Notes: The data come from the RNA Mapping Database (RMDB), library OK3TST. This 207-nucleotide RNA was probed chemically with 2A3. The RNA was probed in 150 mM KOAc, 10 mM MgCl2 and 150 mM bicine (pH 8.5) at 24 C. Values cover nucleotides 27 to 156.
RNA sequence: GGGAACGACUCGAGUAGAGUCGAAAAAUCGGGCGGCCGGCCUCGCGUGGCUCAUCCAAGACUGGGUCACCAAAGCCGAACUGCUCGUCAGCGGACCAGAGGAGAUCCGCAUCAUCACGAGAUGCCAAUGCGGCGGCAACGUGACCAGCACGGCCACGCUGUACCGUGAUUUCGAUCACGGUACAGCAAAAGAAACAACAACAACAAC
Reactivity to 2A3 in 0.01 (KOAc 150mM, MgCl2 10mM, bicine 150mM(pH8.5), 24C), signal-to-noise 1, nucleotides 027 to 156: a000u010c000g000g000g000c010g000g000c040c000g000g000c040c000u030c020g060c180g000u000g000g020c000u000c000a030u060c070c070a140a010g070a100c100u040g000g000g000u010c000a010c040c020a080a040a000g000c000c020g020a090a030c000u010g000c000u010c010g000u000c000a050g020c000g020g000a000c000c010a050g040a060g180g050a030g000a070u040c000c010g010c010a030u090c010a000u030c000a000c070g120a120g010a170u020g000c030c030a010a100u150g010c000g000g050c030g020g030c040a020a150c070g000u030g090a050c000c040a000g070c110a010c030g040g000c020c150a030c050